[RMDB]
RNA sequence: GGGAACGACUCGAGUAGAGUCGAAAAAAAGCAGGAUGCCAGCAUUGGCACAAACAUCCUUCGUGUCUCUGCCUCCGAUGAAGAUGCCGAUAACAAUGGAGCUAUAGUAUACAGCCUGACUGCUCCCUACUACUUUCUGUUUCGACAGAAAGUAGUAAAAAGAAACAACAACAACAAC
Reactivity to DMS in 0.01 (KOAc 150mM, MgCl2 10mM, bicine 150mM(pH8.5), 24C), signal-to-noise 8, nucleotides 027 to 126: a040a060a070g010c060a030g000g010a110u000g010c040c040a090g020c170a110u010u000g020g010c050a050c080a060a080a080c140a080u010c060c040u000u000c090g020u020g000u010c040u010c020u000g010c010c020u000c020c020g010a070u010g000a070a060g010a080u010g000c020c040g000a080u010a070a060c120a050a060u000g010g000a070g010c080u000a070u000a090g020u000a110u000a100c110a090g020c020c020u000g000a110c050u000g000c070u000c000c000c110
Reactivity to 2A3 in 0.01 (KOAc 150mM, MgCl2 10mM, bicine 150mM(pH8.5), 24C), signal-to-noise 6, nucleotides 027 to 126: a000a000a010g050c040a010g020g050a060u070g040c030c020a020g030c060a170u100u120g030g000c030a000c030a030a080a000c020a060u070c020c030u100u070c070g070u020g050u020c010u000c010u030g010c000c010u020c010c020g050a080u090g050a040a040g030a040u090g020c040c020g080a080u060a130a060c060a070a110u140g020g000a030g000c020u080a070u060a190g050u010a070u030a150c030a040g030c000c010u080g060a150c020u030g020c020u020c000c000c000
An RNA of 177 nucleotides, treated with DMS and 2A3 and read out base by base. DMS adducts were read by reverse transcription with MarathonRT. Source: RMDB library OK2TRN, as collected in RNAgym.